Chemical mapping of a 177-nucleotide RNA with 2A3 and DMS. 2A3 adducts were read by reverse transcription with SuperScript II with manganese. It was measured as part of the RMDB library OK2TST.

[RMDB]
RNA sequence: GGGAACGACUCGAGUAGAGUCGAAAAUCGCUUUCUUAUCCUCUUGCUGUGGCUCAGGACCUCACCCGCCUACUGUCACUGGAUACCUUGUCGCAGUUGAGUGGCGCUUUUGUCAUGAUGAUGACCAACUGAUAUCCGUAUUCGUACGGAUAUCAGUAAAAGAAACAACAACAACAAC
Reactivity to 2A3 in 0.01 (KOAc 150mM, MgCl2 10mM, bicine 150mM(pH8.5), 24C), signal-to-noise 6, nucleotides 027 to 126: u040c010g000c050u040u090u030c030u070u090a090u120c000c010u030c030u050u090g050c030u040g040u060g060g000c010u030c060a050g050g030a070c020c000u040c010a060c000c010c000g040c020c010u060a060c020u040g060u080c020a010c060u020g060g000a050u120a210c020c030u050u110g050u040c030g000c090a040g010u070u080g070a040g030u050g000g000c020g050c030u050u100u090u130g030u010c020a030u090g130a110u060g030a010u050g040a070c030c010a030
Reactivity to DMS in 0.01 (KOAc 150mM, MgCl2 10mM, bicine 150mM(pH8.5), 24C), signal-to-noise 7, nucleotides 027 to 126: u000c080g010c090u000u000u010c030u000u000a120u010c040c010u000c060u010u000g010c030u010g030u000g010g000c070u000c080a070g020g000a100c060c030u000c050a080c050c030c040g020c040c030u000a060c080u010g000u010c080a070c040u000g010g000a100u000a070c100c080u010u010g010u000c060g020c040a080g000u000u000g010a110g020u000g010g000c070g000c140u000u000u000u000g010u000c020a050u000g010a140u010g000a110u000g000a090c030c210a100